This 177-nucleotide RNA was probed chemically with DMS and 2A3.
For 2A3, 13,309 sequencing reads were counted.
It was measured as part of the RMDB library OK1LIB.
The RNA was probed in 150 mM KOAc, 10 mM MgCl2 and 150 mM bicine (pH 8.5) at 24 C.
The DMS profile rests on 7,727 reads.
[RMDB]
RNA sequence: GGGAACGACUCGAGUAGAGUCGAAAAACAAGCACGAACAACUGAGCUGGGGUGAAAGAGUGCACGAUAUGCGGCCAGAAAGAGAUGGGUGCUUAGAUCGCGGCUUGAAACCGGCAAAAGUUCAAGCAUCAGGUACGAUAUUCGUAUCGUACCUGAUAAAAGAAACAACAACAACAAC
Reactivity to DMS in 0.01 (KOAc 150mM, MgCl2 10mM, bicine 150mM(pH8.5), 24C), signal-to-noise 5, nucleotides 027 to 126: a080c060a140a090g000c060a090c200g000a040a100c090a090a080c090u000g000a300g010c010u010g010g000g000g000u050g010a110a060a170g010a070g000u010g030c010a260c090g020a060u030a040u040g000c050g010g000c010c020a060g000a060a100a120g020a130g010a110u020g000g010g000u020g020c000u000u010a040g000a040u000c060g000c100g000g020c020u010u000g020a040a090a110c020c010g000g000c060a020a050a050a080g000u000u000c020a080a160g020c050
Reactivity to 2A3 in 0.01 (KOAc 150mM, MgCl2 10mM, bicine 150mM(pH8.5), 24C), signal-to-noise 9, nucleotides 027 to 126: a000c080a040a010g050c030a020c090g080a130a020c030a040a040c070u090g010a010g030c010u100g030g040g030g070u110g110a130a130a080g060a020g040u120g090c020a000c010g000a010u040a010u130g030c020g030g040c000c010a040g130a100a130a010g130a030g030a030u090g030g110g150u030g000c000u020u010a020g000a050u030c010g000c020g050g000c000u000u010g010a080a030a020c010c000g040g000c030a060a120a010a000g000u030u020c020a050a010g010c000